[RMDB]
RNA sequence: GGGAACGACUCGAGUAGAGUCGAAAAGAUUCAGUUCCAGAGCCAAAGAUCGUAGUUCUCGAACAAGUAAUCGAAAAGAUUCCGGAGCAUCUUCUGGUUUAGGUAUUGUUCCUCCAAUGAUAGUGGUACCAAGUACUUCUUGGCGAGCUCUAAUAUGCAUUAGCCCAACGUUCGCGUUGGGCUAAUGAAAAGAAACAACAACAACAAC
Reactivity to 2A3 in 0.01 (KOAc 150mM, MgCl2 10mM, bicine 150mM(pH8.5), 24C), signal-to-noise 1, nucleotides 027 to 156: g060a020u000u050c000a010g040u000u000c000c030a010g020a010g060c020c010a070a150a070g070a130u120c100g010u040a060g040u040u030c060u000c010g010a040a010c100a290a000g060u100a070a020u010c020g030a010a030a150a000g040a030u080u000c060c010g010g020a000g000c010a060u040c020u080u010c020u070g040g000u110u120u090a090g020g000u030a050u090u100g000u060u070c010c010u050c020c080a110a110u130g020a010u040a100g090u060g040g060u030a070c000c010a040a000g000u020a120c080u080u220c020u030u040g020g010c010g030a030g010c000u000c000u090a060a110u140a100u260g030
Reactivity to DMS in 0.01 (KOAc 150mM, MgCl2 10mM, bicine 150mM(pH8.5), 24C), signal-to-noise 1, nucleotides 027 to 156: g000a070u000u010c020a220g030u000u000c000c020a080g000a110g000c020c060a040a140a120g030a060u050c170g000u030a050g020u000u000c010u000c080g020a070a060c040a030a250g080u020a020a060u020c020g020a080a170a120a160g000a200u000u000c030c000g000g010a080g030c140a160u000c050u000u010c010u010g020g000u010u010u000a070g060g040u000a070u000u010g000u000u000c020c040u030c020c040a110a050u000g020a140u000a050g030u010g000g080u010a030c000c020a040a060g000u000a110c220u000u000c050u000u000g010g040c050g000a300g000c000u000c100u000a050a120u000a150u020g000
The record gives the reactivity of an RNA of 207 nucleotides to 2A3 and DMS.